[RMDB]
RNA sequence: GGGAACGACUCGAGUAGAGUCGAAAAACUGGUCGGAACUGGCGGAGGAGCUGAUUCCCUACGUGCGCCAGCUCGGCUUCACCCAUAUCGAGCUGAUGCCGGUGAUGGAACAUCCCUUCGGCGGCUAGCCGUAGCAGCAUUUCGAUGCUGCUACGGCAAAAGAAACAACAACAACAAC
Reactivity to 2A3 in 0.01 (KOAc 150mM, MgCl2 10mM, bicine 150mM(pH8.5), 24C), signal-to-noise 2, nucleotides 027 to 126: a010c040u070g030g060u050c030g010g060a090a140c060u060g200g000c000g000g030a030g010g030a090g000c040u060g050a300u000u000c010c000c000u020a030c030g130u180g000c000g010c000c000a010g000c000u000c030g020g000c030u200u190c090a120c000c030c010a040u070a060u160c040g020a000g000c010u000g000a000u130g000c000c030g110g070u060g070a090u120g000g010a010a030c000a030u010c000c000c000u020u000c060g080g020c000g000g030c070u070a030
Reactivity to DMS in 0.01 (KOAc 150mM, MgCl2 10mM, bicine 150mM(pH8.5), 24C), signal-to-noise 1, nucleotides 027 to 126: a010c060u000g020g040u000c040g010g000a120a060c060u010g010g010c070g000g010a030g010g000a080g020c160u000g000a190u000u000c020c000c090u000a080c050g030u000g010c030g020c050c000a020g000c040u000c000g020g020c300u000u000c130a090c100c060c070a050u000a110u000c010g000a020g000c000u000g000a020u040g010c030c000g000g020u020g020a080u000g020g000a040a060c040a020u000c020c020c000u000u000c010g020g020c010g010g020c040u000a090